Source: RMDB library OK2TST, as collected in RNAgym. Chemical mapping of a 177-nucleotide RNA with 2A3 and DMS.
RNA sequence: GGGAACGACUCGAGUAGAGUCGAAAAAUCAGAUUCGCAAUGCUGGCGUUACUACUGUGGUGAUGAAGCCAACUCGUACGAUUGAUUCUGUCGCGGAGGACAUCAAGACGUUGGGUAGCGUAGUCGGCUGCGAAUACGCAUUCGUGCGUAUUCGCAGAAAAGAAACAACAACAACAAC
Reactivity to 2A3 in 0.01 (KOAc 150mM, MgCl2 10mM, bicine 150mM(pH8.5), 24C), signal-to-noise 2, nucleotides 027 to 126: a010u100c040a020g070a210u120u100c020g000c090a050a140u140g010c020u050g080g000c020g050u030u030a040c030u010a010c010u080g040u030g080g060u030g010a130u040g050a050a030g030c010c010a040a050c040u030c020g040u100a050c020g020a030u000u120g060a030u170u020c060u140g110u080c010g010c050g090g060a030g000g050a020c010a020u040c000a040a020g160a050c000g090u190u060g120g000g000u010a030g060c010g010u040a060g090u030c020g020g040
Reactivity to DMS in 0.01 (KOAc 150mM, MgCl2 10mM, bicine 150mM(pH8.5), 24C), signal-to-noise 3, nucleotides 027 to 126: a110u000c050a070g000a150u020u000c050g000c090a110a050u000g030c000u000g020g020c010g000u000u000a020c050u000a080c050u010g060u000g030g030u000g020a090u020g030a110a110g010c020c010a030a150c040u000c090g020u030a120c080g000a150u000u010g000a080u000u000c070u010g000u000c050g020c170g010g010a230g010g000a120c060a040u000c060a020a090g010a030c010g010u000u010g010g000g030u010a040g000c020g000u030a150g030u000c030g000g020
The RNA was probed in 150 mM KOAc, 10 mM MgCl2 and 150 mM bicine (pH 8.5) at 24 C. For 2A3, 1,728 sequencing reads were counted.